[RMDB]
RNA sequence: GGGAACGACUCGAGUAGAGUCGAAAAGAAAGAAAGAAAUUAGCUCGCCAGUUAGCGAGGUCUGUCCCCACACGACAGAUAAUCGGGUGGAACUCCCGCCCCUUUUCCGAGGGUCAUCGGAACCAAAAAAACUCAGGCAACUUCGGUUGCCUGAGAACUAUGAGAUCAUGUUCGCAUGAUCUCAUAGAAAAGAAACAACAACAACAAC
Reactivity to 2A3 in 0.01 (KOAc 150mM, MgCl2 10mM, bicine 150mM(pH8.5), 24C), signal-to-noise 4, nucleotides 027 to 156: g050a020a040a000g080a040a100a020g050a050a150a040u160u060a100g050c010u000c000g020c030c050a190g130u180u230a020g030c000g000a000g000g010u000c000u000g010u010c020c020c040c000a040c000a000c040g030a000c000a000g030a030u040a070a090u140c010g000g000g000u000g000g010a010a000c020u010c020c000c000g030c010c000c000c000u110u180u060u010c000c000g000a000g000g010g030u070c040a000u000c000g010g010a000a010c020c020a040a100a030a050a030a020a040c000u000c000a000g000g000c010a000a000c010u060u090c170g060g000u000u000g000c000c000u000g000a000g000a000a000
Reactivity to DMS in 0.01 (KOAc 150mM, MgCl2 10mM, bicine 150mM(pH8.5), 24C), signal-to-noise 1, nucleotides 027 to 156: g030a130a110a190g000a100a120a100g000a130a080a100u000u000a140g050c000u000c000g070c000c020a200g020u000u030a070g020c000g000a000g000g010u000c020u020g000u000c000c030c000c240a070c110a190c130g020a020c000a020g000a040u000a030a100u010c040g000g000g000u000g000g020a080a300c050u000c030c000c040g000c010c000c000c000u000u000u000u000c030c000g010a070g000g000g000u010c120a030u000c030g010g020a030a140c230c030a000a000a070a090a050a110a120c010u000c000a020g000g020c020a020a010c040u000u000c250g050g030u000u000g000c000c000u000g000a000g000a030a040